[RMDB]
RNA sequence: GGGAACGACUCGAGUAGAGUCGAAAACAAUUGGCUGUUCAUCAAACCACUCACUCUCUUGGUGCAGUUAGUGGAUUAAUGAGUUAUGAAGUAAGUCAAGCUGUUAUAGAUUUCGUAGCCUCAUGGAGGAGCAGUAAGUGUUCGCACUUACUGCUCCAAAAGAAACAACAACAACAAC
Reactivity to 2A3 in 0.01 (KOAc 150mM, MgCl2 10mM, bicine 150mM(pH8.5), 24C), signal-to-noise 2, nucleotides 027 to 126: c000a020a030u010u020g000g040c010u030g030u070u020c010a050u020c020a030a100a070c020c000a000c010u030c020a030c000u060c000u030c050u140u300g300g050u140g110c000a000g010u010u010a000g000u010g000g030a030u080u030a060a030u070g050a030g080u050u100a050u130g040a060a000g060u180a060a000g000u010c010a000a030g050c080u010g020u100u060a130u070a080g120a160u060u090u080c050g030u080a040g060c000c020u070c030a120u120g060g010a050
Reactivity to DMS in 0.01 (KOAc 150mM, MgCl2 10mM, bicine 150mM(pH8.5), 24C), signal-to-noise 2, nucleotides 027 to 126: c020a030a070u000u020g010g010c020u000g000u010u000c000a010u000c050a050a120a150c010c000a020c020u000c060a010c020u000c040u010c170u020u010g040g070u000g060c200a050g020u000u000a010g020u000g000g010a100u010u020a110a060u000g000a060g010u000u020a050u010g010a040a050g020u000a050a060g000u000c040a010a020g000c100u000g020u000u000a110u000a090g010a110u000u000u020c080g020u010a100g000c040c020u010c080a110u000g000g010a300
Chemical mapping of a 177-nucleotide RNA with 2A3 and DMS.
DMS adducts were read by reverse transcription with MarathonRT.
Conditions: 150 mM KOAc, 10 mM MgCl2 and 150 mM bicine (pH 8.5), 24 C.
The data come from the RNA Mapping Database (RMDB), library OK2TST.
2A3 adducts were read by reverse transcription with SuperScript II with manganese.
For DMS, 1,548 sequencing reads were counted.
Reactivities are given for positions 27 through 126.